RNA sequence: GGGAACGACUCGAGUAGAGUCGAAAAGAUAUGGACCGCCACAGGACGAAGAACUCGGAAACGAGGGAGUCCGUGGCCGGUCCUAAGUCAAAAUCGCGUCUUGUACGUUCGCGUACAAGACGCGAAACAAAGCAGAGUAGUUCGCUACUCUGCUUUGAAAAGAAACAACAACAACAAC
Reactivity to DMS in 0.01 (KOAc 150mM, MgCl2 10mM, bicine 150mM(pH8.5), 24C), signal-to-noise 3, nucleotides 027 to 126: g010a040u000a300u000g000g000a030c000c010g010c000c010a010c000a130g060g000a010c010g000a150a140g020a140a240c010u000c000g000g010a150a120a220c020g000a000g010g000g010a070g010u000c000c010g020u000g000g010c080c020g000g010u010c000c010u010a010a060g000u000c040a070a050a110a140u000c000g020c000g010u000c010u000u000g000u010a000c010g030u000u030c250g010c010g010u010a010c010a010a010g000a010c000g020c000g000a020a030a120
Reactivity to 2A3 in 0.01 (KOAc 150mM, MgCl2 10mM, bicine 150mM(pH8.5), 24C), signal-to-noise 1, nucleotides 027 to 126: g020a000u050a030u140g010g000a010c000c020g050c000c000a030c090a190g020g000a010c030g120a300a140g030a090a030c010u000c000g040g000a110a040a010c010g000a010g000g010g030a000g000u000c000c000g000u000g000g000c020c010g000g030u000c000c000u000a020a000g010u000c000a010a010a030a300u050c010g000c000g000u010c010u000u000g000u000a040c010g060u080u060c300g000c020g140u000a010c010a010a000g000a000c000g000c000g010a000a000a000
The record gives the reactivity of an RNA of 177 nucleotides to DMS and 2A3. For 2A3 the reverse transcriptase was SuperScript II with manganese. It was measured as part of the RMDB library TTRDEL. Conditions: 150 mM KOAc, 10 mM MgCl2 and 150 mM bicine (pH 8.5), 24 C. Reactivities are given for positions 27 through 126.